Structure probing data (2A3 and DMS) for a 207-nucleotide construct.
DMS (dimethyl sulfate) methylates the pairing face of unpaired adenines and cytosines.
It was measured as part of the RMDB library M2RFPK.
[RMDB]
RNA sequence: GGGAACGACUCGAGUAGAGUCGAAAAGUCUGUGCGUUUCCAUUUGAGUAUCCUGAAAACGGGCUUUUCAGCAUGGAACGUACAAAUUAAAUAGUAGGAGUGCAUAGUGGCCCGUAUAGCAGGCAUUGAGGCGAGGAUUGUUUCGACAAUCCUCGAACUACUCAACUAGCUUCGGCUAGUUGAGUAGAAAAGAAACAACAACAACAAC
Reactivity to 2A3 in 0.01 (KOAc 150mM, MgCl2 10mM, bicine 150mM(pH8.5), 24C), signal-to-noise 2, nucleotides 027 to 156: g090u040c040u040g020u010g020c000g010u010u120u120c050c000a060u110u050u040g050a070g030u100a130u150c000c020u020g060a030a030a100a070c100g010g010g000c030u100u040u020u070c040a020g010c050a010u020g010g010a030a000c010g020u030a000c000a010a000a000u070u080a060a000a040u110a050g040u010a010g000g060a040g020u060g010c060a060u080a110g040u090g020g000c010c010c020g000u000a000u040a070g010c050a000g050g040c030a030u030u150g080a010g020g070c010g000a000g000g010a000u030u010g030u030u040u070c080g000a000c000a010a000u010c010c020u000c000g000a000a010
Reactivity to DMS in 0.01 (KOAc 150mM, MgCl2 10mM, bicine 150mM(pH8.5), 24C), signal-to-noise 1, nucleotides 027 to 156: g000u000c010u020g030u010g030c010g000u000u000u000c010c000a150u000u000u000g020a160g000u000a080u000c100c000u000g000a080a050a120a200c050g000g000g000c170u010u000u020u000c050a130g040c090a040u000g030g000a020a040c000g000u000a200c030a050a020a080u000u000a030a070a080u030a100g020u010a090g000g000a120g070u000g030c040a140u000a150g030u010g020g010c000c030c000g080u060a050u000a140g000c010a010g020g040c070a130u010u010g010a100g040g030c010g010a040g010g010a010u000u000g020u000u000u000c170g030a120c010a010a030u010c000c000u000c000g000a000a060

About this RNA: For 2A3, 1,494 sequencing reads were counted. Reactivities are given for positions 27 through 156.